This 177-nucleotide RNA was probed chemically with DMS. It was measured as part of the RMDB library TTRINS.
[RMDB]
RNA sequence: GGGAACGACUCGAGUAGAGUCGAAAAGAUAUGGAGGAUGACAUUCGCUAUAAUCAUAUGAACAAUGACCUACCUCGGAAACGAGGUAGGUCUAUCAUAUGGUAGCGAAUGGAGUCCUCCUAAGUCACAAUCGACCAUAGUUCGCUAUGGUCGAUUGAAAAGAAACAACAACAACAAC
Reactivity to DMS in 0.01 (KOAc 150mM, MgCl2 10mM, bicine 150mM(pH8.5), 24C), signal-to-noise 2, nucleotides 027 to 126: g020a030u010a300u000g010g000a030g000g050a000u030g020a300c000a010u020u020c000g030c000u000a180u010a300a190u000c000a000u020a000u000g010a050a190c270a110a070u000g010a010c010c000u000a010c030c000u000c010g010g000a140a090a230c030g000a030g020g020u000a000g010g000u000c010u000a000u000c000a060u000a000u000g030g050u000a000g000c010g010a010a000u000g000g000a230g000u000c010c030u000c000c000u010a010a050g030u010c020a300
The RNA was probed in 150 mM KOAc, 10 mM MgCl2 and 150 mM bicine (pH 8.5) at 24 C.